RNA sequence: GGGAACGACUCGAGUAGAGUCGAAAACAAAAUUUUAACGCUCACCCCACGCAACAAGUGGAGUGGCGUUUCUGACUUGUCCCUCAAACAAAAACUCCUUUACACCUUCUAUGGUAAGGAGUCACUUAAUACUCCUAAACUUCGGUUUAGGAGUAUUAAAAGAAACAACAACAACAAC
Reactivity to DMS in 0.01 (KOAc 150mM, MgCl2 10mM, bicine 150mM(pH8.5), 24C), signal-to-noise 1, nucleotides 027 to 126: c030a040a030a120a280u010u010u010u000a010a000c000g040c000u000c020a010c000c030c000c000a020c030g020c200a120a090c230a120a060g030u000g000g020a000g000u010g000g010c010g000u010u000u000c070u000g030a180c130u000u000g010u000c000c010c000u040c160a110a090a090c110a050a120a050a070a040c010u000c000c000u000u000u000a130c140a050c020c030u010u020c200u000a050u000g000g000u000a050a020g000g000a020g020u000c130a070c120u010u000
Reactivity to 2A3 in 0.01 (KOAc 150mM, MgCl2 10mM, bicine 150mM(pH8.5), 24C), signal-to-noise 4, nucleotides 027 to 126: c010a020a050a020a050u050u090u080u120a020a000c010g000c030u170c110a000c010c010c030c000a000c010g090c030a050a280c040a300a080g010u000g010g000a010g020u010g010g030c010g000u000u000u000c000u020g100a080c040u030u060g020u050c030c030c020u050c110a130a150a070c050a020a130a040a010a010c010u030c000c000u040u130u160a110c090a040c050c010u200u150c080u280a100u300g000g000u000a000a000g010g000a000g000u000c000a010c010u000u000
Conditions: 150 mM KOAc, 10 mM MgCl2 and 150 mM bicine (pH 8.5), 24 C. The record gives the reactivity of an RNA of 177 nucleotides to DMS and 2A3. DMS adducts were read by reverse transcription with MarathonRT. For 2A3, 2,590 sequencing reads were counted. 2A3 adducts were read by reverse transcription with SuperScript II with manganese. The data come from the RNA Mapping Database (RMDB), library 15KREP.